RNA sequence: GGGAACGACUCGAGUAGAGUCGAAAAGUUGCGAAUCUGUUCAACGCAACCCUAGGAGAAGGCACCUAUAAAGUCCACAGUGAAGCCUUCACACCCAACGGCAAGAGAUUCAAACACUACAAAAGGGCAUAACCUAGGUUUUCGAACCUAGGUUAUGAAAAGAAACAACAACAACAAC
Reactivity to DMS in 0.01 (KOAc 150mM, MgCl2 10mM, bicine 150mM(pH8.5), 24C), signal-to-noise 6, nucleotides 027 to 126: g010u000u010g020c030g010a090a070u000c120u010g000u000u000c120a150a120c010g000c010a010a040c010c040c040u010a080g030g010a080g010a030a030g000g030c020a250c050c020u000a080u010a070a110a150g000u010c050c050a060c110a070g010u010g010a080a120g000c000c020u010u000c020a090c090a130c010c010c030a050a080c120g000g010c070a060a070g010a070g020a080u000u000c100a110a080a080c110a040c080u010a060c120a030a060a070a100g000g000g000
Reactivity to 2A3 in 0.01 (KOAc 150mM, MgCl2 10mM, bicine 150mM(pH8.5), 24C), signal-to-noise 5, nucleotides 027 to 126: g010u000u010g010c010g040a070a100u120c090u220g180u190u190c110a120a040c020g000c020a030a030c010c010c020u030a050g000g050a120g020a060a020g000g000c030a060c050c010u090a060u110a200a130a020g070u040c060c010a040c030a080g090u120g130a090a010g020c010c000u010u020c010a010c000a010c000c020c010a060a030c050g040g020c030a060a030g040a000g000a080u040u040c020a040a090a040c070a040c100u200a040c070a040a140a030a040g020g040g000